Chemical mapping of a 177-nucleotide RNA with 2A3 and DMS. For DMS, 885 sequencing reads were counted. The 2A3 profile rests on 1,641 reads. The RNA was probed in 150 mM KOAc, 10 mM MgCl2 and 150 mM bicine (pH 8.5) at 24 C. DMS adducts were read by reverse transcription with MarathonRT. Source: RMDB library M2PK50, as collected in RNAgym.
[RMDB]
RNA sequence: GGGAACGACUCGAGUAGAGUCGAAAAGCCGAAGAGUUCGCUCUUCGGCGACGAAUUUGGCGUAGAUCAGAGUCUACAGUACUAGCCAUCCCAGAUGUACAAAUAAGCAUUGCUUCGGCAAUGCUAAGUAACGAGGAAACUUCGGUUUCCUCGUUACAAAAGAAACAACAACAACAAC
Reactivity to 2A3 in 0.01 (KOAc 150mM, MgCl2 10mM, bicine 150mM(pH8.5), 24C), signal-to-noise 2, nucleotides 027 to 126: g000c000c010g000a000a000g040a000g040u090u150c150g000c130u010c000u020u000c010g000g140c000g000a030c020g110a070a190u070u090u160g020g020c030g000u000a000g010a020u050c190a100g080a120g300u000c000u010a010c020a030g000u010a030c040u010a020g000c010c000a060u000c000c000c000a030g010a120u130g000u010a040c030a020a060a020u180a150a010g000c030a000u010u010g010c010u000u080c160g030g000c020a000a000u020g000c000u000a000a030
Reactivity to DMS in 0.01 (KOAc 150mM, MgCl2 10mM, bicine 150mM(pH8.5), 24C), signal-to-noise 1, nucleotides 027 to 126: g030c000c000g020a020a000g010a030g040u020u010c250g000c000u010c000u000u000c000g030g000c000g020a010c120g000a120a200u000u010u000g000g000c000g000u000a010g000a030u010c150a180g020a190g040u030c010u000a020c000a150g010u000a040c030u010a260g020c020c000a110u010c010c010c000a170g000a110u000g010u000a020c030a110a040a090u000a050a080g020c010a000u000u000g010c000u000u020c150g010g000c000a010a000u000g000c000u010a010a050